This 177-nucleotide RNA was probed chemically with DMS and 2A3. The DMS profile rests on 4,798 reads. The data come from the RNA Mapping Database (RMDB), library OK1LIB.

[RMDB]
RNA sequence: GGGAACGACUCGAGUAGAGUCGAAAAGCUCGGAGACGAGCAAGGCUGACAAAACGGUGUCCCAACCUCCACGUGGUGUCGGCUGGAUAAUGCUGCAUUAUGUUGCAUUUAUCAACUGGGAAUCAAAGAGUAUACCACCAUUCGUGGUGGUAUACUCAAAAGAAACAACAACAACAAC
Reactivity to DMS in 0.01 (KOAc 150mM, MgCl2 10mM, bicine 150mM(pH8.5), 24C), signal-to-noise 3, nucleotides 027 to 126: g000c010u000c000g030g010a260g000a250c020g030a030g050c010a120a080g000g000c030u050g000a040c000a020a010a040a030c020g000g020u000g000u000c010c030c020a090a100c130c050u000c080c060a120c020g000u010g010g060u020g010u020c000g000g000c020u030g000g000a010u000a010a010u000g010c010u000g070c000a200u010u020a140u030g010u030u000g000c010a020u020u030u000a000u000c010a120a120c070u010g000g010g010a090a070u030c090a070a110a140
Reactivity to 2A3 in 0.01 (KOAc 150mM, MgCl2 10mM, bicine 150mM(pH8.5), 24C), signal-to-noise 4, nucleotides 027 to 126: g000c010u000c000g060g020a090g010a040c000g000a000g000c000a000a070g020g000c010u000g010a010c020a010a040a040a040c150g100g010u030g060u010c000c000c010a020a030c010c010u050c030c020a150c090g080u130g010g010u000g020u040c000g000g010c010u020g010g010a000u020a020a010u010g010c010u010g020c010a090u100u110a180u300g030u020u020g000c000a000u050u050u080a040u010c020a000a050c070u050g000g060g000a010a040u110c020a020a080a030